[RMDB]
RNA sequence: GGGAACGACUCGAGUAGAGUCGAAAAGUCCGUUCCUUCGGGAACGGACAAAGGGAAACCAAGCAGUAGGUUCGUCUACCUACAGCAAAAAUAAACACGAAAAAAGCCCUCUGUUCGCAGAGGGCAACGAUAGCAAUACCUUCGGGUAUUGCUAUCGAAAAGAAACAACAACAACAAC
Reactivity to DMS in 0.01 (KOAc 150mM, MgCl2 10mM, bicine 150mM(pH8.5), 24C), signal-to-noise 2, nucleotides 027 to 126: g000u010c020c000g000u020u000c010c010u000u000c160g010g070g010a010a010c020g000g000a010c010a000a010a140g000g000g000a110a080a300c020c000a090a100g000c000a080g050u000a000g010g010u000u000c300g000u000c130u000a050c000c000u000a000c000a070g000c010a000a070a120a080a030u010a080a050a050c100a050c140g020a000a070a070a130a120a120g000c000c000c000u000c020u020g000u000u020c170g060c000a030g000a000g040g010g000c000a000a040
Reactivity to 2A3 in 0.01 (KOAc 150mM, MgCl2 10mM, bicine 150mM(pH8.5), 24C), signal-to-noise 1, nucleotides 027 to 126: g020u020c000c000g030u010u020c030c010u060u030c160g100g020g000a000a000c000g000g000a000c000a000a020a000g040g010g030a110a000a000c010c020a020a060g000c010a020g000u030a010g030g020u030u120c080g080u030c230u060a020c000c000u010a000c020a020g000c000a050a080a040a040a000u200a070a110a000c100a000c100g070a050a100a080a040a050a000g000c000c020c010u000c000u010g060u100u110c250g000c050a000g010a000g000g000g000c020a000a000

Description: This 177-nucleotide RNA was probed chemically with DMS and 2A3. The RNA was probed in 150 mM KOAc, 10 mM MgCl2 and 150 mM bicine (pH 8.5) at 24 C.